[RMDB]
RNA sequence: GGGAACGACUCGAGUAGAGUCGAAAACGCCUCCUUUGGUGGGAUAAAGCGCCAGUUCGCGUUGGGUAUCUUGUUCUGCAUUCACGAAAGCAAUACGUCGUGACAGUGGCAGUGCUGCACCGGCGCGCAACAUAGCCGUGUUCGCACGGCUAUGUUGAAAAGAAACAACAACAACAAC
Reactivity to DMS in 0.01 (KOAc 150mM, MgCl2 10mM, bicine 150mM(pH8.5), 24C), signal-to-noise 3, nucleotides 027 to 126: c090g010c080c030u000c040c050u010u020u010g020g020u020g010g000g010a090u010a040a130a160g010c090g020c070c030a080g000u020u010c040g030c050g010u000u000g010g000g020u000a060u000c120u000u020g010u000u010c010u000g000c080a160u000u000c020a010c020g020a030a030a090g010c130a080a080u010a170c300g010u000c000g010u000g020a040c300a070g010u020g000g020c030a020g000u000g000c020u000g000c110a080c040c020g010g010c030g010c030g010
Reactivity to 2A3 in 0.01 (KOAc 150mM, MgCl2 10mM, bicine 150mM(pH8.5), 24C), signal-to-noise 1, nucleotides 027 to 126: c070g120c050c000u070c020c070u130u020u090g130g050u100g070g070g030a120u150a140a220a010g060c000g030c050c000a090g030u100u080c010g000c040g000u050u030g100g020g010u050a070u100c000u020u150g030u010u040c020u000g000c040a090u050u030c010a010c020g000a130a090a020g060c050a030a160u180a170c140g150u000c040g000u000g030a060c050a240g230u180g120g010c040a020g010u010g000c040u030g000c060a050c110c020g020g000c000g000c040g000